[RMDB]
RNA sequence: GGGAACGACUCGAGUAGAGUCGAAAAAAAAAAUUCAAUCAUCACAAAAGGACAAAAACGGGGCAGUCUUUGUGCCUUCACCUAUAUAAUGACGAAGUGGACGUUUUGAAGAAGAUAGCAGAGCAAAGCAUUAAUCAUAGUUCGCUAUGAUUAAUGCAAAAGAAACAACAACAACAAC
Reactivity to 2A3 in 0.01 (KOAc 150mM, MgCl2 10mM, bicine 150mM(pH8.5), 24C), signal-to-noise 2, nucleotides 027 to 126: a000a000a000a000a000a000u060u020c020a020a080u070c010a000u030c000a010c020a120a140a040a030g040g000a010c000a060a120a040a050a030c090g000g000g040g000c010a000g010u020c000u080u090u070g070u030g010c010c020u010u050c010a010c010c010u020a010u030a010u030a300a120u110g040a020c050g030a080a010g020u040g030g050a020c030g030u020u030u110u140g070a050a040g020a020a010g040a040u080a030g000c050a010g020a000g050c040a060a060a020
Reactivity to DMS in 0.01 (KOAc 150mM, MgCl2 10mM, bicine 150mM(pH8.5), 24C), signal-to-noise 3, nucleotides 027 to 126: a010a070a070a030a050a080u020u020c050a060a070u000c030a020u000c040a050c060a070a070a080a040g010g010a080c070a060a040a040a070a060c120g020g010g010g030c070a050g010u010c050u000u000u010g020u020g010c050c010u000u010c070a040c030c020u010a060u010a050u010a050a050u020g000a050c040g000a050a080g040u000g010g020a070c070g010u000u010u010u000g000a050a030g000a030a070g000a050u000a020g000c060a060g020a110g000c120a040a060a070